[RMDB]
RNA sequence: GGGAACGACUCGAGUAGAGUCGAAAAGCAAGCUAGCCGGCAAAAGAGCAAACUUGACCACCAAGGAUAAAAGAGAUCUUAUCCAAGGAUGCAAAAGAUAAUCUCACUUUUGACACCCACUGAUCUCAAAACGUGCGGUUCUUCGGAACCGCACGAACUACGACUGAAAGUUCGCUUUCAGUCGUAGAAAAGAAACAACAACAACAAC
Reactivity to DMS in 0.01 (KOAc 150mM, MgCl2 10mM, bicine 150mM(pH8.5), 24C), signal-to-noise 1, nucleotides 027 to 156: g020c000a060a070g000c000u010a300g000c030c020g000g000c000a130a110a230a240g010a130g030c000a020a070a010c020u000u000g000a150c060c010a210c010c020a100a300g010g000a100u000a020a100a060a170g010a080g030a050u030c000u000u000a060u000c150c050a060a270g000g000a060u020g000c000a000a000a020a010g000a060u000a030a110u000c220u000c140a160c020u010u000u000u000g020a230c020a080c040c000c010a120c140u000g000a000u000c010u000c030a060a040a010a130c030g040u000g030c000g050g010u000u000c000u000u000c300g010g020a020a000c000c040g000c000a000c130g020a000a040
Reactivity to 2A3 in 0.01 (KOAc 150mM, MgCl2 10mM, bicine 150mM(pH8.5), 24C), signal-to-noise 4, nucleotides 027 to 156: g020c010a000a010g000c010u060a010g000c010c030g150g010c090a100a110a060a020g120a020g010c020a040a040a030c030u040u040g090a140c040c010a010c030c010a080a060g020g000a030u020a050a040a060a030g020a000g000a000u000c000u000u010a020u030c030c040a050a040g030g010a040u060g000c000a010a030a020a000g030a090u150a200a210u150c100u030c100a040c000u010u030u000u020g090a100c020a040c030c010c000a050c100u080g010a020u010c000u000c000a020a070a020a020c010g010u010g000c010g000g010u010u010c000u030u070c170g090g000a000a000c000c010g020c000a000c000g000a000a000
Chemical mapping of a 207-nucleotide RNA with DMS and 2A3. The 2A3 profile rests on 2,960 reads. It was measured as part of the RMDB library M2RFPK. The DMS profile rests on 1,575 reads. DMS (dimethyl sulfate) methylates the pairing face of unpaired adenines and cytosines. The reactions ran in a buffer of 150 mM KOAc, 10 mM MgCl2 and 150 mM bicine (pH 8.5), at 24 C.